Annotation:
An RNA of 177 nucleotides, treated with DMS and read out base by base. Values cover nucleotides 27 to 126. For DMS, 2,851 sequencing reads were counted.

RNA sequence: GGGAACGACUCGAGUAGAGUCGAAAAGAUAUGGACUAUACAGCGGAAUGUCCGAGUUUCAACAGCGUUACGUCGGAAACGACGUGAACGACAUGAAACCGGACAUUCCGCUGUAUAGUCCUAAGUCCUAAGUAUCACGGUUCGCCGUGAUACUUAGAAAAGAAACAACAACAACAAC
Reactivity to DMS in 0.01 (KOAc 150mM, MgCl2 10mM, bicine 150mM(pH8.5), 24C), signal-to-noise 2, nucleotides 027 to 126: g010a110u000a300u020g000g000a010c000u010a010u000a010c000a010g010c000g010g000a030a000u000g010u000c000c000g020a130g010u020u000u000c000a050a140c300a240g020c020g000u000u000a030c010g000u000c010g000g010a120a110a280c020g030a010c000g010u010g010a010a010c000g000a070c160a260u000g000a000a020a000c000c000g000g000a020c000a010u010u000c000c000g000c000u000g000u000a000u000a000g010u000c000c000u000a020a090g000u000c020